[RMDB]
RNA sequence: GGGAACGACUCGAGUAGAGUCGAAAAAGUCACCUCCUGUCUCUCACCCCAGGUAUUACUUAGAAUUAUUAUCAUAUUUCCCUUCCUUUAAAGUAAGUAAGGGUGAUUGGUGACAAUAUGGAGAACUAUGAUUUUUCCAUUAACCUAAUAAUAAUUAAAAUACCAUACGAUUCGUCGUAUGGUAUUUAAAAGAAACAACAACAACAAC
Reactivity to DMS in 0.01 (KOAc 150mM, MgCl2 10mM, bicine 150mM(pH8.5), 24C), signal-to-noise 1, nucleotides 027 to 156: a120g010u000c030a000c030c010u010c100c040u000g010u030c020u000c010u010c020a070c040c010c010c040a300g020g000u010a050u000u000a040c010u000u000a080g030a100a050u000u000a040u000u000a090u010c030a130u000a080u000u000u010c000c010c000u010u000c050c030u000u000u000a090a070a140g010u010a010a040g000u000a090a030g000g010g030u000g000a040u010u010g020g030u010g010a000c000a080a100u000a030u010g000g000a020g030a010a070c130u000a160u000g010a160u000u000u000u000u000c000c000a070u000u000a060a160c010c000u000a080a100u010a090a050u010a050a110u020u010a140
Reactivity to 2A3 in 0.01 (KOAc 150mM, MgCl2 10mM, bicine 150mM(pH8.5), 24C), signal-to-noise 1, nucleotides 027 to 156: a020g000u120c000a000c020c050u040c030c020u000g030u010c030u000c000u030c200a020c020c000c000c000a020g020g050u050a190u210u090a050c020u010u110a060g000a020a250u200u000a080u100u070a080u290c050a030u050a140u280u060u000c050c000c000u030u080c030c000u020u040u040a180a110a030g020u050a000a000g020u020a000a000g030g030g000u020g000a000u010u010g000g000u000g000a000c000a000a000u100a030u040g000g000a020g000a000a000c060u200a300u300g050a200u080u010u000u000u030c020c000a050u120u000a000a070c000c000u010a270a150u050a120a130u030a020a020u210u130a080